An RNA of 177 nucleotides, treated with 2A3 and DMS and read out base by base. For 2A3, 679 sequencing reads were counted.
[RMDB]
RNA sequence: GGGAACGACUCGAGUAGAGUCGAAAACAUGUUUAAUAUAUCCUUUCGUUUACCCUUUACAGGCAUCGAUCGUAGCAUAUUUUCCGCGUCUGAGAUGGAAAUGUUAAAACUACAAAAAUGCGUAAUGGUGUACGUCUUCAUUCGUGAAGACGUACACAAAAGAAACAACAACAACAAC
Reactivity to 2A3 in 0.01 (KOAc 150mM, MgCl2 10mM, bicine 150mM(pH8.5), 24C), signal-to-noise 1, nucleotides 027 to 126: c010a040u160g070u070u120u140a230a110u110a010u020a070u190c040c000u030u060u030c010g040u030u100u230a250c000c030c000u010u010u190a060c090a070g110g090c000a020u000c060g050a070u080c090g000u000a010g040c050a000u000a070u130u000u000u020c030c000g000c020g120u090c220u230g100a110g000a090u100g020g020a070a000a000u000g020u000u020a110a240a030a000c090u040a000c010a000a020a000a020a000u010g000c040g020u050a040a040u120g060
Reactivity to DMS in 0.01 (KOAc 150mM, MgCl2 10mM, bicine 150mM(pH8.5), 24C), signal-to-noise 1, nucleotides 027 to 126: c060a120u000g020u000u020u030a050a050u010a120u020a200u000c050c050u000u000u000c080g000u000u000u030a080c060c020c030u010u000u000a090c180a090g030g050c020a010u030c090g000a270u000c210g000u000a020g080c130a110u010a050u010u000u000u000c000c030g000c120g000u000c070u000g020a240g020a110u000g000g000a030a040a030u000g030u000u010a010a090a030a040c030u000a060c020a000a080a030a040a010u000g010c050g000u010a040a060u020g020
Conditions: 150 mM KOAc, 10 mM MgCl2 and 150 mM bicine (pH 8.5), 24 C.